[RMDB]
RNA sequence: GGGAACGACUCGAGUAGAGUCGAAAAGAUAUGGACCUCCACUUCUUUUGACGGGUGUCGGAAACGACACUCCGAUAAGAAGGGAGGUCCUAAGUCAAACAUUCGGUCAGUUCGCUGACCGAAUGAAUCAUGACAGCACCUUCGGGUGCUGUCAUGAAAAAGAAACAACAACAACAAC
Reactivity to DMS in 0.01 (KOAc 150mM, MgCl2 10mM, bicine 150mM(pH8.5), 24C), signal-to-noise 1, nucleotides 027 to 126: g000a030u000a300u030g020g000a000c030c000u000c000c000a200c030u000u000c000u000u000u000u000g010a300c300g000g010g010u000g000u000c000g000g000a130a070a090c000g000a020c010a000c020u000c000c000g000a110u000a010a040g000a020a000g010g000g000a000g040g000u010c000c000u020a000a040g000u000c040a210a140a300c000a020u020u000c020g000g000u000c000a000g010u000u030c230g030c000u010g000a020c010c000g000a000a000u000g000a030a130

An RNA of 177 nucleotides, treated with DMS and read out base by base. For DMS, 800 sequencing reads were counted. The reactions ran in a buffer of 150 mM KOAc, 10 mM MgCl2 and 150 mM bicine (pH 8.5), at 24 C.